[RMDB]
RNA sequence: GGGAACGACUCGAGUAGAGUCGAAAAGAUAUGGAGGAGCGUUCUUCGCUUGGAUUUAUAGGGAACCGUAUGUCGGAAACGACAUACUCAGUACCUAUUGUCAGCGAAGUUCGCUCCUCCUAAGUCAUCGAUCCUUUUACUUCGGUAAAAGGAUCGAAAAAGAAACAACAACAACAAC
Reactivity to DMS in 0.01 (KOAc 150mM, MgCl2 10mM, bicine 150mM(pH8.5), 24C), signal-to-noise 2, nucleotides 027 to 126: g000a070u000a300u000g000g000a030g050g020a030g010c010g010u000u000c000u000u000c000g010c000u020u000g040g000a020u000u000u000a010u000a020g000g000g000a180a070c300c300g010u000a010u000g010u000c020g010g010a150a120a240c000g000a000c000a000u000a010c020u000c000a020g000u000a120c000c010u000a000u000u000g000u000c030a030g010c010g000a020a000g020u000u000c000g010c000u000c000c000u000c000c000u000a000a030g000u000c060a210